[RMDB]
The record gives the reactivity of an RNA of 177 nucleotides to DMS and 2A3.
For 2A3 the reverse transcriptase was SuperScript II with manganese.
The RNA was probed in 150 mM KOAc, 10 mM MgCl2 and 150 mM bicine (pH 8.5) at 24 C.

RNA sequence: GGGAACGACUCGAGUAGAGUCGAAAAAUUCCGAGGGGACCGUCCCCUCGGUAAUGGCGAAUGGGACCCAGAAAUCUCUCUAGAUUCCGAUAGAGAAUCGAGAGAAAACUGGCUCUCCCUUAGCCAUGCAAAUAAAUAACUUCGGUUAUUUAUUUGCAAAAGAAACAACAACAACAAC
Reactivity to DMS in 0.01 (KOAc 150mM, MgCl2 10mM, bicine 150mM(pH8.5), 24C), signal-to-noise 1, nucleotides 027 to 126: a150u000u030c000c000g000a000g030g000g010g010a200c300c270g000u000c000c000c000c010u010c000g010g010u000a020a050u010g000g010c020g000a160a080u000g000g000g000a020c300c010c000a000g020a040a200a180u000c000u000c010u010c000u020a150g000a040u000u010c000c000g040a280u010a120g010a180g010a030a000u000c030g000a050g020a000g000a010a000a190a120c010u010g000g000c000u000c050u000c020c000c000u010u010a250g030c000c000a040u000
Reactivity to 2A3 in 0.01 (KOAc 150mM, MgCl2 10mM, bicine 150mM(pH8.5), 24C), signal-to-noise 1, nucleotides 027 to 126: a000u150u030c020c000g000a010g000g030g020g020a050c040c080g230u100c050c010c010c000u000c000g000g000u000a000a020u040g000g000c000g030a030a000u020g010g000g000a020c000c010c010a000g030a010a300a000u010c020u000c000u000c020u050a090g000a030u000u000c020c030g150a210u130a200g200a030g000a030a010u000c010g000a000g010a010g000a010a000a010a020c010u000g010g000c000u000c000u000c000c000c000u000u000a000g000c020c000a000u040